[RMDB]
This 177-nucleotide RNA was probed chemically with DMS and 2A3.
RNA sequence: GGGAACGACUCGAGUAGAGUCGAAAAUGGUCUUUACAAACGUUGAUUAAUGCACCUUUAACGUUAGUGCUUUUAUAUGCUGCUUGAACUGGGUUUUCAGCUGCUUGAGCUGAACCAGCCAUAAGUAGGUGAUGGAUAUGUUCGCAUAUCCAUCACCAAAAGAAACAACAACAACAAC
Reactivity to DMS in 0.01 (KOAc 150mM, MgCl2 10mM, bicine 150mM(pH8.5), 24C), signal-to-noise 3, nucleotides 027 to 126: u000g000g020u000c030u000u010u010a030c080a120a060a040c040g000u000u000g000a050u020u010a080a070u000g000c100a090c300c060u000u000u010a040a030c050g020u000u000a070g010u000g010c060u010u010u000u010a060u010a140u020g000c050u000g000c020u000u010g000a210a160c000u000g000g010g000u000u000u000u000c000a010g000c010u000g040c300u000u020g000a040g020c020u000g020a020a040c000c020a020g000c030c060a080u000a030a020g020u000a030
Reactivity to 2A3 in 0.01 (KOAc 150mM, MgCl2 10mM, bicine 150mM(pH8.5), 24C), signal-to-noise 3, nucleotides 027 to 126: u050g050g000u060c040u050u200u110a080c080a030a040a000c020g040u040u050g110a100u110u130a130a080u130g060c020a110c030c000u040u110u070a070a010c030g020u000u070a040g040u020g060c000u130u130u060u020a190u020a030u160g030c000u000g030c000u030u050g030a070a030c010u000g000g000g140u080u030u090u080c010a000g000c010u030g030c050u110u160g190a010g000c010u010g000a030a030c000c010a000g000c010c000a150u130a090a000g040u030a060
The RNA was probed in 150 mM KOAc, 10 mM MgCl2 and 150 mM bicine (pH 8.5) at 24 C.